This 207-nucleotide RNA was probed chemically with DMS and 2A3. For 2A3 the reverse transcriptase was SuperScript II with manganese. The data come from the RNA Mapping Database (RMDB), library OK3TST. The 2A3 profile rests on 420 reads. The RNA was probed in 150 mM KOAc, 10 mM MgCl2 and 150 mM bicine (pH 8.5) at 24 C.
[RMDB]
RNA sequence: GGGAACGACUCGAGUAGAGUCGAAAAUCUUGGGAAAAUAUUUUACAUCAAUAUUUGUAAUCCUGACACUGUGUCUGGCUGCGUUUGCAUUUGUUUUCGUUGGGCCAAAGGCACUCUUCUGUCUCAAGUUCUUUAAAAAGGGAAGAGCACUGAUUGAUACUGGUAAUAGGUUCGCCUAUUACCAGUAAAAAGAAACAACAACAACAAC
Reactivity to DMS in 0.01 (KOAc 150mM, MgCl2 10mM, bicine 150mM(pH8.5), 24C), signal-to-noise 2, nucleotides 027 to 156: u000c050u000u020g020g000g010a120a120a130a130u010a060u010u000u000u000a130c090a120u000c070a070a080u010a030u000u000u020g010u000a080a090u000c050c010u000g000a070c060a130c080u000g030u000g030u000c040u000g030g010c020u000g020c050g000u000u020u000g010c000a150u000u000u000g010u000u000u000u000c030g020u000u030g060g000g030c070c080a010a060a190g020g000c030a060c030u000c020u000u000c010u010g020u000c040u000c040a040a180g050u000u000c060u000u000u010a070a060a030a050a090g020g020g000a030a030g000a040g020c030a040c050u000g020a130u010u000g000a300
Reactivity to 2A3 in 0.01 (KOAc 150mM, MgCl2 10mM, bicine 150mM(pH8.5), 24C), signal-to-noise 1, nucleotides 027 to 156: u110c020u010u060g020g020g000a100a000a060a010u100a120u110u130u110u230a200c070a040u240c030a090a080u020a070u080u170u050g070u090a150a050u050c060c000u000g050a000c060a020c070u120g030u020g020u000c020u020g050g020c000u020g010c000g010u010u060u030g000c010a050u020u050u300g070u010u040u040u120c020g010u030u150g030g040g000c020c010a150a170a060g020g000c000a080c020u000c010u000u050c000u010g130u000c000u000c020a080a170g050u080u030c000u070u260u200a180a200a070a000a000g080g020g000a030a050g030a050g000c120a020c050u010g090a120u110u100g010a020